Conditions: 150 mM KOAc, 10 mM MgCl2 and 150 mM bicine (pH 8.5), 24 C. The record gives the reactivity of an RNA of 177 nucleotides to 2A3 and DMS. DMS (dimethyl sulfate) methylates the pairing face of unpaired adenines and cytosines. 2A3 adducts were read by reverse transcription with SuperScript II with manganese.
RNA sequence: GGGAACGACUCGAGUAGAGUCGAAAAUAAUCAAGAUGAAUCGUUUUUAGUUUGCUUGCUUACCUUAAGGGCCAGUAUGAGAUCCACUUGAAUCUUUUUAUGUAGGCAGAGAGCGACGGAAUUUAAACAUAUAGUAGGUCUUCGGACCUACUAUAUGAAAAGAAACAACAACAACAAC
Reactivity to 2A3 in 0.01 (KOAc 150mM, MgCl2 10mM, bicine 150mM(pH8.5), 24C), signal-to-noise 8, nucleotides 027 to 126: u190a000a070u100c060a040a030g060a140u140g070a040a100u090c080g050u030u060u030u030u080a120g020u060u070u160g040c010u040u050g010c000u010u030a080c030c000u030u130a050a060g030g010g010c010c010a000g020u040a070u160g090a100g010a080u030c010c010a040c060u030u040g030a060a060u030c020u000u080u020u030u010a090u130g040u030a040g050g010c030a020g020a010g000a000g110c020g010a010c010g020g050a010a010u120u150u100a190a150a010
Reactivity to DMS in 0.01 (KOAc 150mM, MgCl2 10mM, bicine 150mM(pH8.5), 24C), signal-to-noise 7, nucleotides 027 to 126: u040a100a110u020c050a050a060g010a130u020g010a080a080u030c060g010u010u010u020u020u040a100g000u000u010u020g000c020u010u000g010c030u000u000a050c030c070u000u040a070a090g000g000g010c070c040a040g000u010a040u010g010a050g000a030u010c040c050a080c110u010u000g000a050a100u010c000u000u010u020u010u010a020u020g000u010a040g000g020c040a080g000a080g000a030g020c040g010a030c050g000g000a060a060u020u020u020a060a100a170
For DMS the reverse transcriptase was MarathonRT. It was measured as part of the RMDB library OK1LIB.